[RMDB]
An RNA of 177 nucleotides, treated with DMS and read out base by base.
RNA sequence: GGGAACGACUCGAGUAGAGUCGAAAAAGAGGUGGGCUAGGUUGCCCGGUACCCCACCUGUGGUACGUGGUUCUUGGUUACAGGUUCCGCAAGGGUUUUACAGUGAUGUGAAAGACCUAGCCACAGGAAGCACAGUGCGUUUCGACGCACUGUGCUUAAAAGAAACAACAACAACAAC
Reactivity to DMS in 0.01 (KOAc 150mM, MgCl2 10mM, bicine 150mM(pH8.5), 24C), signal-to-noise 1, nucleotides 027 to 126: a080g030a130g000g020u010g010g000g040c000u000a100g000g030u000u010g010c010c000c000g000g030u000a090c050c000c000c050a300c070c080u020g040u000g000g010u000a030c180g000u000g000g000u000u010c010u000u010g030g010u010u020a140c000a030g000g010u000u000c020c020g030c040a150a080g020g020g010u000u000u000u000a000c010a010g000u000g000a170u000g010u000g010a040a070a120g000a020c010c000u000a110g000c000c000a020c020a060g010g000
Values cover nucleotides 27 to 126. Source: RMDB library OK2TST, as collected in RNAgym. The DMS profile rests on 1,052 reads.